[RMDB]
RNA sequence: GGGAACGACUCGAGUAGAGUCGAAAAGAUUUUCGAGAGCUUAUCCAGUCUUAUCACAAUUCUGUUAUUAAGUGAUGUCUAACGAGGGGAAAUACUUCUUGGCAGAAGGUGAUACUUUUCUGCUACAGUCAGUAUGGCUAUUCGUAGCCAUACUGACAAAAGAAACAACAACAACAAC
Reactivity to DMS in 0.01 (KOAc 150mM, MgCl2 10mM, bicine 150mM(pH8.5), 24C), signal-to-noise 2, nucleotides 027 to 126: g000a140u000u000u000u000c050g000a110g020a130g000c020u000u010a060u000c100c000a100g000u000c110u000u000a040u010c040a030c080a090a090u010u000c070u000g000u020u000a030u000u000a050a050g010u000g010a110u000g000u000c010u010a050a090c090g000a100g000g000g000g010a060a030a090u030a060c030u000u010c010u000u000g000g000c010a000g000a010a000g000g000u000g010a090u000a170c250u010u010u000u000c010u010g000c070u000a080c220a120
Reactivity to 2A3 in 0.01 (KOAc 150mM, MgCl2 10mM, bicine 150mM(pH8.5), 24C), signal-to-noise 2, nucleotides 027 to 126: g000a010u060u070u090u070c060g050a040g000a030g090c010u100u070a060u080c000c010a030g050u000c030u020u030a020u010c000a000c030a180a300u050u090c030u040g080u130u040a060u030u080a030a030g020u000g110a080u100g060u100c060u060a060a090c020g030a080g020g060g030g020a020a020a020u080a040c000u020u060c000u020u010g000g000c000a000g010a010a000g030g000u040g060a040u060a100c020u050u130u020u000c010u040g040c030u020a050c020a020

Structure probing data (DMS and 2A3) for a 177-nucleotide construct. Conditions: 150 mM KOAc, 10 mM MgCl2 and 150 mM bicine (pH 8.5), 24 C. The 2A3 profile rests on 1,436 reads. For DMS, 1,516 sequencing reads were counted. Reactivities are given for positions 27 through 126.